[RMDB]
RNA sequence: GGGAACGACUCGAGUAGAGUCGAAAAUCAGCUGGAAAGGUCAGUUCCACAUUGGCAUCCGAACUCGGUAUCACUGCCGAGGAUGCAAGGCUUGUUUCAGAGAUUGCAAUGCAUACUACUGAGGACAUGUGCAUGCUGUGUUCGCACAGCAUGCACAAAAAGAAACAACAACAACAAC
Reactivity to 2A3 in 0.01 (KOAc 150mM, MgCl2 10mM, bicine 150mM(pH8.5), 24C), signal-to-noise 2, nucleotides 027 to 126: u020c070a000g030c000u000g000g120a030a000a000g010g040u020c060a090g000u070u000c000c000a060c030a300u060u160g190g000c000a000u000c000c000g000a080a080c000u000c000g000g000u180a050u250c050a070c170u100g000c000c000g000a000g000g030a000u040g000c000a000a050g050g000c020u000u210g200u070u140u000c030a030g000a020g160a230u220u030g030c090a050a240u150g000c010a070u020a140c000u090a170c050u000g000a000g040g000a000c000a020
Reactivity to DMS in 0.01 (KOAc 150mM, MgCl2 10mM, bicine 150mM(pH8.5), 24C), signal-to-noise 1, nucleotides 027 to 126: u000c030a140g000c000u000g120g000a130a120a070g060g000u000c080a050g000u070u000c070c000a070c070a300u030u000g000g000c030a040u000c000c060g000a080a150c300u000c000g010g070u030a150u060c150a090c000u000g010c000c000g000a000g030g020a050u000g110c040a010a140g010g080c110u000u000g040u000u000u000c180a030g080a070g000a280u000u000g000c000a110a140u000g000c000a040u030a000c090u000a080c000u000g040a000g000g110a100c000a160